RNA sequence: GGGAACGACUCGAGUAGAGUCGAAAAGAAAGAGAGUUAGACACGGUUGAUCUCACCCUUCGGGGGGGCUAUAGAGAUCACUGGAAGCACUACCGGACAACUGGAACAUUGCAGCAAUGCAGCCCAAAAAAUCCAAACAUCUUCGGAUGUUUGGAAACUCUGAGCUAAAGUUCGCUUUAGCUCAGAGAAAAGAAACAACAACAACAAC
Reactivity to 2A3 in 0.01 (KOAc 150mM, MgCl2 10mM, bicine 150mM(pH8.5), 24C), signal-to-noise 1, nucleotides 027 to 156: g040a000a100a000g030a010g010a000g020u000u140a040g050a030c030a020c150g080g040u170u300g020a010u000c010u010c000a040c000c010c070u070u240c230g000g010g010g000g000g010g000c020u090a060u090a130g000a000g000a000u000c000a000c010u000g000g060a110a000g000c030a000c050u050a030c030c080g020g040a060c030a160a060c090u010g020g060a100a040c020a080u110u180g000c000a020g020c000a010a020u030g020c030a050g020c040c000c000a030a110a050a060a000a000u000c000c000a000a010a010c000a000u000c000u060u040c080g150g000a000u000g010u020u000u020g000g000a000a000a000